[RMDB]
RNA sequence: GGGAACGACUCGAGUAGAGUCGAAAAGUGCAGCAGUUCGCUGCUGCACAAAAGGCAUCGUAUCAUUGCUUCGAAGCCAAAGUAGAAACUAGAAAGCAGUGAAAAGACACUUCUUCGGAAGUGUCAAGCAUUACAUUAUGUUCGCAUAAUGUAAUGCAAAAGAAACAACAACAACAAC
Reactivity to 2A3 in 0.01 (KOAc 150mM, MgCl2 10mM, bicine 150mM(pH8.5), 24C), signal-to-noise 9, nucleotides 027 to 126: g000u000g000c000a000g000c010a000g000u040u110c160g050c130u000g000c000u000g000c000a000c000a000a080a000a000g020g000c010a030u020c030g020u050a020u140c010a010u010u020g000c000u020u010c010g020a050a010g000c010c010a060a050a000g070u130a050g140a100a130a030c050u030a050g130a080a060a000g000c000a000g000u010g030a060a050a020a030g010a000c000a000c000u000u010c000u030u050c200g100g000a010a000g000u010g000u010c000a000a010
Reactivity to DMS in 0.01 (KOAc 150mM, MgCl2 10mM, bicine 150mM(pH8.5), 24C), signal-to-noise 7, nucleotides 027 to 126: g010u000g010c000a010g010c010a000g020u000u000c240g030c000u000g000c010u010g020c000a000c000a020a040a090a130g010g010c000a140u000c030g010u000a040u000c010a010u000u000g010c000u000u010c010g010a060a070g010c010c010a070a070a160g010u010a100g010a120a080a130c100u000a100g010a040a070a050g030c000a010g020u000g010a130a080a080a120g000a010c000a000c000u000u000c000u000u010c160g020g000a010a000g010u000g000u000c000a020a060